[RMDB]
RNA sequence: GGGAACGACUCGAGUAGAGUCGAAAAAAGGACUGGUUCGCCAGUCCUUAUUCAUUCGUACGCAACGAAGCGUAACUCAUUACGCAAAUGACUAAAAGCGUAUACGAAAGGACUUCGGUCCUUUCAAACUUAAUCUGUGUUUCGACACAGAUUAAGUAAAAGAAACAACAACAACAAC
Reactivity to DMS in 0.01 (KOAc 150mM, MgCl2 10mM, bicine 150mM(pH8.5), 24C), signal-to-noise 7, nucleotides 027 to 126: a020a010g000g010a010c000u010g000g010u000u000c230g010c010c000a010g020u000c000c000u000u010a010u000u000c070a160u010u010c100g010u000a020c010g010c010a090a100c120g010a120a140g010c000g010u000a010a060c270u010c190a120u000u010a000c010g030c000a070a090a080u010g010a150c210u010a040a050a080a140g000c000g000u000a020u000a080c190g000a000a010a010g000g000a010c000u000u010c190g030g000u000c000c000u000u000u000c000a060a110
Reactivity to 2A3 in 0.01 (KOAc 150mM, MgCl2 10mM, bicine 150mM(pH8.5), 24C), signal-to-noise 5, nucleotides 027 to 126: a000a020g010g000a000c000u020g000g030u040u050c120g040c050c000a000g010u000c000c000u000u000a000u000u010c000a010u010u030c020g020u010a000c010g000c050a110a040c070g100a100a050g000c000g010u010a040a020c050u070c210a220u050u050a010c000g000c000a040a090a130u190g080a100c050u170a010a040a060a050g000c010g010u010a030u010a030c070g000a000a000a010g000g000a000c010u020u070c250g090g000u010c000c010u000u000u000c000a010a000
Chemical mapping of a 177-nucleotide RNA with DMS and 2A3. The RNA was probed in 150 mM KOAc, 10 mM MgCl2 and 150 mM bicine (pH 8.5) at 24 C. DMS adducts were read by reverse transcription with MarathonRT. For 2A3, 11,647 sequencing reads were counted. Reactivities are given for positions 27 through 126. It was measured as part of the RMDB library M2PK50.